[RMDB]
RNA sequence: GGGAACGACUCGAGUAGAGUCGAAAAGGUGUCGAUUGCUAAGCCUAUAGCGGUUGGCGCUACAGGUACUAUGUCGCGUCAUGGUGCUUGUGAACUCGAUGCUUGAUGCGACAAGUAUUGAGUGCUCUAUGUGUCUAUAGGCUUAGAUGUAUAGAGACGAGACCUGUAUGUUCGCAUACAGGUUUCGAAAAGAAACAACAACAACAAC
Reactivity to 2A3 in 0.01 (KOAc 150mM, MgCl2 10mM, bicine 150mM(pH8.5), 24C), signal-to-noise 9, nucleotides 027 to 156: g100g000u080g040u100c040g050a100u050u160g010c000u000a000a000g000c000c000u010a010u000a000g010c030g020g050u040u050g020g000c000g000c020u120a150c020a030g030g020u020a010c010u050a100u090g010u020c020g010c020g060u040c020a020u080g050g040u080g070c060u090u080g050u080g140a110a080c040u010c060g070a070u090g020c010u020u010g000a010u040g030c010g020a010c010a000a000g000u010a010u010u040g010a010g000u020g000c010u020c030u110a090u080g220u030g050u080c000u000a000u000a010g010g000c000u000u000a000g000a000u010g000u000a050u020a020g090a000g010a030
Reactivity to DMS in 0.01 (KOAc 150mM, MgCl2 10mM, bicine 150mM(pH8.5), 24C), signal-to-noise 5, nucleotides 027 to 156: g020g020u000g020u000c010g010a100u000u000g010c010u000a050a070g010c020c010u000a040u000a020g020c020g030g000u000u000g010g010c020g020c020u000a060c040a100g010g020u000a020c040u010a090u000g020u000c040g020c050g020u010c010a090u000g020g030u000g010c050u030u000g020u010g000a100a090c070u010c030g020a080u000g000c020u000u010g010a070u010g020c100g010a080c010a030a040g010u000a010u000u010g010a080g020u000g010c020u000c050u000a040u000g010u000g010u000c000u010a020u000a050g030g020c040u000u000a000g000a020u010g020u000a050u000a050g010a130g010a300